[RMDB]
RNA sequence: GGGAACGACUCGAGUAGAGUCGAAAACGCAUGCGAGAGCAUGCGGCUAAGCUUCGGCUUAGUAAGAGCAACUUCGGAUUUAAGGCUCCCCGGCGUGUCUCGAACCAUGCCGGGCCAAACCCAUAGGGCUGGCGGUCCCUGUGCGGUCCAAAUUCAAGAGCUAAUCAUUAUUCGUAAUGAUUAGCUCAAAAGAAACAACAACAACAAC
Reactivity to 2A3 in 0.01 (KOAc 150mM, MgCl2 10mM, bicine 150mM(pH8.5), 24C), signal-to-noise 5, nucleotides 027 to 156: c020g020c000a000u000g000c020g000a040g010a000g070c000a000u000g010c020g000g000c000u000a000a010g000c000u030u110c290g110g000c000u010u010a000g000u010a050a030g010a000g000c040a100a150c030u090u050c080g050g020a040u040u050u130a040a040g090g040c000u010c010c000c000c010g000g000c000g030u010g020u040c090u060c300g070a050a040c030c000a010u020g000c000c000g000g000g000c000c000a030a020a000c010c000c010a010u020a020g000g010g030c040u050g120g020c070g040g070u130c010c000c000u000g010u010g010c090g020g010u060c080c040a020a030a020u130u100c080a170a050
Reactivity to DMS in 0.01 (KOAc 150mM, MgCl2 10mM, bicine 150mM(pH8.5), 24C), signal-to-noise 2, nucleotides 027 to 156: c020g000c010a020u000g030c020g000a280g010a300g030c000a010u000g010c010g030g030c000u000a010a040g050c010u000u010c300g060g030c020u000u000a030g030u000a090a180g000a060g040c030a100a060c050u000u000c020g040g010a080u000u000u000a130a130g020g010c000u010c020c020c010c010g010g040c000g050u000g030u010c090u000c220g030a140a140c160c010a020u010g050c010c000g010g000g040c030c020a070a050a100c020c010c010a120u000a070g020g020g020c000u000g000g020c110g020g020u020c010c000c000u010g040u000g010c090g000g000u000c030c030a040a080a150u000u010c070a090a270